[RMDB]
RNA sequence: GGGAACGACUCGAGUAGAGUCGAAAAUCAUUACCAGCUAACGUAACACAAGUGGUUGUGCCGGACACAUUAAGAGUAGCUAGUAUUCUAGCACACACAUUAUAUGAUUAUCCGAGUCAUCAGUUAGAAUCAAUUGAUCAUUCGUGAUCAAUUGAUUAAAAGAAACAACAACAACAAC
Reactivity to 2A3 in 0.01 (KOAc 150mM, MgCl2 10mM, bicine 150mM(pH8.5), 24C), signal-to-noise 8, nucleotides 027 to 126: u100c030a010u070u210a090c020c000a010g050c040u030a020a040c030g160u120a100a020c050a020c060a230a120g060u110g110g090u100u050g020u050g020c010c000g020g010a020c020a000c020a090u070u110a080a030g070a030g080u040a040g010c010u010a000g030u060a200u170u130c010u000a000g000c000a010c000a010c000a000c000a030u070u120a150u070a020u160g110a100u060u080a040u060c010c010g010a050g080u040c010a050u010c020a050g040u020u060a040g090
Reactivity to DMS in 0.01 (KOAc 150mM, MgCl2 10mM, bicine 150mM(pH8.5), 24C), signal-to-noise 7, nucleotides 027 to 126: u040c100a090u020u020a150c030c020a110g000c040u010a050a040c090g020u030a080a070c110a100c150a110a090g020u010g000g000u000u010g010u020g000c030c010g000g000a060c300a060c030a020u010u010a050a040g010a140g000u000a100g010c000u000a010g010u020a150u030u030c000u000a020g000c010a040c080a060c090a070c110a110u010u000a020u030a040u000g000a060u020u010a170u020c020c020g000a090g030u000c080a060u010c080a060g010u010u000a020g010